[RMDB]
RNA sequence: GGGAACGACUCGAGUAGAGUCGAAAAGAUAUGGAGCCUUUGUCAGCUCGGUAAAGCCAACAGCAAGCUCGGAAACGAGCUUGACAUGGCUUUAAAUGAGCUUGGAUUUAAGGCUCCUAAGUCAAAACCUUUACACCCUUUCGAGGGUGUAAAGGAACGAAUCAUUUGACUUCGGUCAAAUGAUUCGAAAAGAAACAACAACAACAAC
Reactivity to 2A3 in 0.01 (KOAc 150mM, MgCl2 10mM, bicine 150mM(pH8.5), 24C), signal-to-noise 1, nucleotides 027 to 156: g040a010u070a030u120g000g000a000g000c000c000u000u010u010g010u000c000a000g000c010u010c000g020g000u040a000a020a010g020c020c020a030a050c030a170g010c000a000a010g000c010u000c010g010g020a030a120a070c010g010a000g010c040u000u000g040a010c010a070u050g000g060c000u000u010u000a040a050a050u050g010a000g010c020u050u090g070g000a030u210u300u210a010a000g000g010c000u000c000c000u000a000a000g010u000c010a020a030a030a020c000c000u000u000u030a000c000a000c010c000c000u000u050u090c250g100a010g000g000g000u000g000u000a000a000a020g000g000a000a010